[RMDB]
RNA sequence: GGGAACGACUCGAGUAGAGUCGAAAAGAAAUUCCCGAUCGGCGGUAGAGUCCGCGAGCCGAACGAAAAAGGUUUGGCAGGAACCGGUGAGAUUCCGGUACCGACAGUAUAGUCUGGAUGGAAGAAGGUAGCCUCCUCUCGUUCGCGAGAGGAGGAAUCCUAGCCUUAAGUUCGCUUAAGGCUAGGAAAAAGAAACAACAACAACAAC
Reactivity to DMS in 0.01 (KOAc 150mM, MgCl2 10mM, bicine 150mM(pH8.5), 24C), signal-to-noise 2, nucleotides 027 to 156: g000a100a100a180u010u000c000c000c000g000a050u010c010g000g000c000g000g050u010a150g000a070g040u000c000c010g030c030g020a300g000c000c000g020a030a090c050g010a080a180a120a120a190g000g020u000u000u000g000g000c030a050g000g000a060a030c020c000g000g050u010g010a240g000a300u000u010c010c020g000g000u000a000c010c000g030a060c050a070g010u020a140u000a120g010u010c060u000g030g020a120u000g010g010a070a060g010a170a110g030g000u020a130g020c000c000u000c000c010u000c000u010c000g040u010u020c300g050c020g040a020g020a020g020g000a000g000g010a010a010